[RMDB]
RNA sequence: GGGAACGACUCGAGUAGAGUCGAAAAGACUACUGAGCAGAAUGCUCUAGGAGCCAUGUACAGCAAGAUCGUGGAGAUAGAAGAAGAAAAACCCCUGUCUAAUGACUUUCUAGGGUGGGGUGACCCUGUGGUUCCUGAAAGGCAUGAGUUUAGUAGACUAAAUCAUUAUGUUCGCAUAAUGAUUUAGAAAAGAAACAACAACAACAAC
Reactivity to 2A3 in 0.01 (KOAc 150mM, MgCl2 10mM, bicine 150mM(pH8.5), 24C), signal-to-noise 4, nucleotides 027 to 156: g070a020c000u010a000c000u020g000a010g000c010a000g040a260a010u010g010c010u030c040u140a010g010g010a000g000c020c010a040u060g080u140a180c070a080g040c060a070a090g030a230u070c030g060u110g080g120a070g020a030u100a040g060a100a010g040a090a010g060a070a130a040a020a050c020c020c030c020u020g060u030c020u040a130a110u080g030a050c000u060u140u060c050u120a020g020g010g010u030g010g140g040g030u080g040a030c010c000c000u020g020u000g000g000u000u000c000c000u030g030a090a040a010g010g000c000a010u010g000a000g010u000u010u010a010g000u010a000g010a000
Reactivity to DMS in 0.01 (KOAc 150mM, MgCl2 10mM, bicine 150mM(pH8.5), 24C), signal-to-noise 2, nucleotides 027 to 156: g000a160c000u000a030c010u010g030a090g000c020a120g020a300a100u000g010c000u000c050u000a000g010g000a020g020c000c010a070u010g040u000a100c120a120g050c100a110a090g010a090u000c020g050u000g010g010a140g000a080u000a030g010a050a050g020a100a130g020a130a080a090a100a160c020c010c010c000u000g000u000c020u000a130a090u010g000a040c030u000u000u000c070u000a110g010g000g020u000g030g020g050g000u020g000a100c000c020c010u020g050u000g030g010u000u000c000c000u000g000a070a050a120g010g000c000a060u020g000a300g020u000u000u000a040g010u000a060g000a200
Record summary
The record gives the reactivity of an RNA of 207 nucleotides to 2A3 and DMS. The reactions ran in a buffer of 150 mM KOAc, 10 mM MgCl2 and 150 mM bicine (pH 8.5), at 24 C. Values are in units of 0.01, from 0 to 300, in steps of 10.